[RMDB]
RNA sequence: GGGAACGACUCGAGUAGAGUCGAAAAUGAGGGGAAAUUUUCUUCACGUGUGCAAACGAGUUGCCGGUGUGCGGUACGUGUUUGUUGACCGAGCUGACAGGCCCCGGAGUGCUCAGAAGAUGAUGGCGAUAUGUGUGGAUUUCGAUCCACACAUAUCAAAAGAAACAACAACAACAAC
Reactivity to DMS in 0.01 (KOAc 150mM, MgCl2 10mM, bicine 150mM(pH8.5), 24C), signal-to-noise 6, nucleotides 027 to 126: u000g010a170g000g020g010g000a080a090a120u000u010u000u000c030u000u000c010a090c110g020u010g020u010g000c030a030a040a070c050g010a100g010u010u000g020c020c020g000g010u010g020u010g030c020g010g010u000a030c040g020u000g010u000u000u000g010u000u000g010a070c050c040g010a090g010c040u000g010a090c120a100g000g010c030c010c010c040g000g000a130g000u000g000c040u000c040a110g010a060a070g010a080u010g000a100u000g000g020c280
Reactivity to 2A3 in 0.01 (KOAc 150mM, MgCl2 10mM, bicine 150mM(pH8.5), 24C), signal-to-noise 3, nucleotides 027 to 126: u110g020a090g050g020g030g090a030a080a090u140u160u030u010c020u020u040c030a030c050g100u140g030u060g050c010a000a010a070c030g030a050g120u170u090g060c010c020g010g080u230g090u170g200c030g000g010u010a010c020g070u110g040u150u040u040g070u030u060g020a020c000c030g010a020g020c010u020g030a050c030a080g090g000c010c010c000c000g000g010a030g020u050g000c010u000c060a040g020a070a010g040a040u110g020a050u040g050g000c040
This 177-nucleotide RNA was probed chemically with DMS and 2A3. Source: RMDB library OK2TRN, as collected in RNAgym. For DMS, 10,689 sequencing reads were counted. The reactions ran in a buffer of 150 mM KOAc, 10 mM MgCl2 and 150 mM bicine (pH 8.5), at 24 C.